[RMDB]
RNA sequence: GGGAACGACUCGAGUAGAGUCGAAAACCUGCCAGAGAGGGCUUUUGGUUUAUCCUAUCUGCUGUGGUUUAUGUACAAUUCGAAAGUCAUAUGCAACGGCAGAUAGGAGCAAUCAUUAGCCACAAAGCUUCAUAGUUAGGUUCGCCUAACUAUGAAGAAAAGAAACAACAACAACAAC
Reactivity to DMS in 0.01 (KOAc 150mM, MgCl2 10mM, bicine 150mM(pH8.5), 24C), signal-to-noise 3, nucleotides 027 to 126: c010c010u000g030c150c160a110g010a210g020a130g010g000g020c000u000u000u000u000g010g010u000u000u000a090u000c000c000u010a020u000c000u000g000c000u010g010u000g000g020u000u000u000a010u000g000u000a010c000a070a170u020u010c290g000a120a180a110g000u000c010a010u000a000u000g010c000a040a020c000g000g030c000a010g000a000u000a010g000g000a010g020c170a050a000u000c000a010u000u000a010g000c000c000a050c090a100a140a160g010
Reactivity to 2A3 in 0.01 (KOAc 150mM, MgCl2 10mM, bicine 150mM(pH8.5), 24C), signal-to-noise 3, nucleotides 027 to 126: c000c000u010g090c110c070a070g090a010g040a130g090g040g010c000u020u010u000u000g000g010u020u000u040a050u020c000c000u000a000u010c000u000g000c000u000g020u010g030g010u010u020u010a010u020g090u090a020c060a130a150u120u170c100g160a180a040a020g020u010c010a000u010a010u020g010c010a020a000c000g000g000c010a000g000a000u000a000g000g000a000g000c000a000a000u010c000a010u000u010a000g000c030c000a020c020a020a090a010g050